[RMDB]
RNA sequence: GGGAACGACUCGAGUAGAGUCGAAAAGAAAACAAGUACCGAGAACAUUGUUUUCGCUGCUUGGCGUUGCCGUUUUGUGUUGCAGUUGGUUGGGUAACGCCGCAAAUACCAACCGUAAAGAGAGAUACCGUACGUACUGAUUCGUCAGUACGUACGGAAAAGAAACAACAACAACAAC
Reactivity to DMS in 0.01 (KOAc 150mM, MgCl2 10mM, bicine 150mM(pH8.5), 24C), signal-to-noise 1, nucleotides 027 to 126: g000a020a030a210a170c000a060a000g000u000a010c300c020g000a040g030a010a000c000a170u010u030g020u010u000u010u000c030g000c090u000g010c000u000u000g000g020c000g000u020u000g010c030c000g000u030u000u000u000g010u070g000u000u000g010c050a050g000u000u070g000g000u000u020g020g000g030u010a060a050c090g020c020c030g030c050a100a040a120u050a050c030c040a030a010c010c020g030u000a000a060a070g000a160g010a080g000a050u000a160
Reactivity to 2A3 in 0.01 (KOAc 150mM, MgCl2 10mM, bicine 150mM(pH8.5), 24C), signal-to-noise 2, nucleotides 027 to 126: g000a000a010a000a040c020a000a000g020u040a030c110c080g060a040g050a070a030c100a300u130u300g000u000u000u010u000c000g000c000u050g000c000u030u090g000g000c040g000u010u050g000c000c000g040u010u020u020u220g220u010g070u000u040g040c000a040g000u040u030g040g000u090u150g110g020g000u040a040a030c020g000c030c000g010c010a040a050a000u140a000c000c030a030a000c040c000g070u130a070a100a000g110a020g030a010g000a030u050a060